Structure probing data (2A3 and DMS) for a 177-nucleotide construct. Source: RMDB library OK2TRN, as collected in RNAgym.
[RMDB]
RNA sequence: GGGAACGACUCGAGUAGAGUCGAAAACGCGCGAUGCGCGGCGGCUCGCGACGGUCCAGUACGAGGCGGGCACGGCCGGCUAUCUGCAGGUGCUGCUCGCCGAUCAGCAAUAUCGGCAGGCGCGGCAGAUCAUAUGGACUUUCGAGUCCAUAUGAUCAAAAGAAACAACAACAACAAC
Reactivity to 2A3 in 0.01 (KOAc 150mM, MgCl2 10mM, bicine 150mM(pH8.5), 24C), signal-to-noise 4, nucleotides 027 to 126: c030g060c010g000c060g170a150u160g040c190g010c020g060g010c020g020g000c010u020c030g010c040g120a090c030g010g020u040c040c030a020g030u040a030c060g020a060g000g090c010g000g000g000c070a070c060g150g040c030c010g020g000c030u110a100u110c070u110g010c010a030g060g080u080g070c010u020g000c010u020c000g000c010c000g000a020u010c020a010g100c020a050a120u070a020u200c010g020g000c020a090g000g000c070g000c030g040g000c030a020
Reactivity to DMS in 0.01 (KOAc 150mM, MgCl2 10mM, bicine 150mM(pH8.5), 24C), signal-to-noise 5, nucleotides 027 to 126: c030g020c050g020c020g010a070u010g020c020g010c010g000g020c040g010g010c020u000c010g010c020g000a140c130g010g000u010c040c120a100g020u000a060c070g010a170g010g020c000g000g000g010c010a040c060g020g020c020c000g010g010c020u010a050u010c100u000g030c010a070g010g020u000g000c060u000g010c030u000c060g020c020c020g000a020u000c120a090g010c160a090a120u000a060u000c030g000g010c010a080g010g010c060g010c010g000g000c080a100
The RNA was probed in 150 mM KOAc, 10 mM MgCl2 and 150 mM bicine (pH 8.5) at 24 C.